Conditions: 150 mM KOAc, 10 mM MgCl2 and 150 mM bicine (pH 8.5), 24 C. This 207-nucleotide RNA was probed chemically with 2A3 and DMS. The 2A3 profile rests on 924 reads. For DMS, 2,235 sequencing reads were counted. Reactivities are rounded to 0.1 and cut off at 0 and 3. Values cover nucleotides 27 to 156. It was measured as part of the RMDB library OK3TST.
RNA sequence: GGGAACGACUCGAGUAGAGUCGAAAAUCUACGGAAUGAGUUAUAGGGUCAUUAUUCAUCGACAUCGCUAAUUUUCACGCCGUCUUCGAUUUCACUGUUUAUAUUACCAUUAUUAUAAUCAAGUGUAUUAUUUAUAUCGUUAGUAGUAGGCGCAUCGCACUCAAUGCCAUUUCGAUGGCAUUGAGUGAAAAGAAACAACAACAACAAC
Reactivity to 2A3 in 0.01 (KOAc 150mM, MgCl2 10mM, bicine 150mM(pH8.5), 24C), signal-to-noise 3, nucleotides 027 to 156: u090c020u020a030c050g040g070a140a060u010g040a060g140u070u070a070u190a150g070g000g030u020c030a030u030u150a070u200u140c020a030u160c040g020a030c010a070u050c040g000c160u030a010a200u050u070u110u110c100a060c070g040c000c010g100u060c020u050u050c010g020a020u090u030u040c000a000c000u000g000u010u070u000a020u020a040u020u130a110c040c020a000u090u170a030u090u000a010u300a120a000u040c030a060a040g020u000g000u020a090u100u040a110u090u300u010a230u100a010u070c020g000u010u040a010g010u040a010g010u000a050g040g000c020g010c010a030u080c030g010
Reactivity to DMS in 0.01 (KOAc 150mM, MgCl2 10mM, bicine 150mM(pH8.5), 24C), signal-to-noise 1, nucleotides 027 to 156: u000c000u000a100c020g030g000a110a080u000g000a150g010u010u020a130u010a050g020g030g040u020c020a130u000u010a070u000u000c110a100u010c030g020a040c020a090u000c000g000c120u000a050a070u000u000u000u000c050a090c010g020c020c010g020u000c060u000u000c010g010a050u000u000u010c000a040c000u000g000u000u000u000a030u010a030u000u000a150c030c060a100u020u000a080u000u000a020u000a010a010u000c000a040a070g010u000g000u020a050u000u020a170u010u000u010a090u000a090u020c020g000u000u000a090g040u010a070g030u000a090g000g000c000g020c040a120u000c060g000